Overview
Structure probing data (DMS and 2A3) for a 177-nucleotide construct. Conditions: 150 mM KOAc, 10 mM MgCl2 and 150 mM bicine (pH 8.5), 24 C. It was measured as part of the RMDB library TTRINS.
RNA sequence: GGGAACGACUCGAGUAGAGUCGAAAAGAUAUGGAUUCACUGUAGGGAGUGACGAAGGCUAUAUAUACGGUCGGAAACGACCGUAUAUAUAGUGUUGACGUCACGAGGAUCUAUUGAAUCCUAAGUCGAGUUCUAUUUAGUUCGCUAAAUAGAACUCAAAAGAAACAACAACAACAAC
Reactivity to DMS in 0.01 (KOAc 150mM, MgCl2 10mM, bicine 150mM(pH8.5), 24C), signal-to-noise 6, nucleotides 027 to 126: g020a110u010a290u000g000g000a010u010u000c010a060c300u020g020u000a010g000g010g000a060g020u010g000a020c000g010a300a090g000g010c000u000a000u000a000u000a000u000a020c000g000g020u000c000g010g000a080a120a220c010g010a010c010c000g010u000a000u000a000u000a000u000a010g020u000g000u010u010g000a290c060g010u000c000a000c000g000a050g020g000a040u000c010u010a020u000u000g000a020a010u000c010c000u010a050a080g010u000c090
Reactivity to 2A3 in 0.01 (KOAc 150mM, MgCl2 10mM, bicine 150mM(pH8.5), 24C), signal-to-noise 1, nucleotides 027 to 126: g060a000u090a050u260g000g000a040u040u030c030a030c290u300g040u090a000g010g010g000a060g020u000g010a010c010g030a010a000g160g000c010u000a000u000a000u000a010u020a030c010g000g000u030c010g030g040a000a180a020c010g000a000c000c000g010u000a000u000a000u000a000u000a000g010u000g000u020u060g050a010c040g030u000c010a000c000g040a100g030g010a010u010c020u030a060u070u140g040a010a000u030c000c000u040a100a020g150u170c150